[RMDB]
Record summary:
This 170-nucleotide RNA was probed chemically with DMS and 2A3. The RNA was probed in 150 mM KOAc, 10 mM MgCl2 and 150 mM bicine (pH 8.5) at 24 C. For 2A3 the reverse transcriptase was SuperScript II with manganese.

RNA sequence: GGGAACGACUCGAGUAGAGUCGAAAAUUGAAGGUAAAACAGCCUGUGGGUGAAACACACCCACAGGGCCCAUUGGGCGCUAGCACUCUUGUAUCACGGUACCUUUGUGCGCCUGUUUUACCGAAGGCUAGCCGAGUGUUCGCACUCGGCAAAAGAAACAACAACAACAAC
Reactivity to DMS in 0.01 (KOAc 150mM, MgCl2 10mM, bicine 150mM(pH8.5), 24C), signal-to-noise 4, nucleotides 027 to 129: u000u040g000a140a140g000g060u000a050a010a060a000c010a010g020c010c020u020g140u020g000g000g000u030g000a100a100a160c210a240c000a040c000c000c000a000c050a050g000g040g000c030c000c010a070u060u120g010g010g120c000g020c050u080a120g040c000a040c010u000c010u010u080g020u010a070u020c100a080c240g000g000u000a010c010c040u000u000u000g020u020g020c000g000c040c000u040g000u070u010u040u040a030c020c040g020a060a060g010g030c130u070a070
Reactivity to 2A3 in 0.01 (KOAc 150mM, MgCl2 10mM, bicine 150mM(pH8.5), 24C), signal-to-noise 3, nucleotides 027 to 129: u100u100g060a100a020g000g000u000a000a000a000a000c000a000g000c000c010u000g010u000g000g000g000u020g040a040a080a020c150a010c000a000c070c000c020a000c000a000g000g000g000c000c000c000a020u220u300g030g000g000c000g000c090u080a040g000c000a010c010u000c000u000u020g000u000a010u000c030a030c160g130g010u000a020c000c020u000u000u000g000u000g000c020g000c000c000u000g000u000u010u000u010a000c000c000g000a020a000g050g020c050u040a030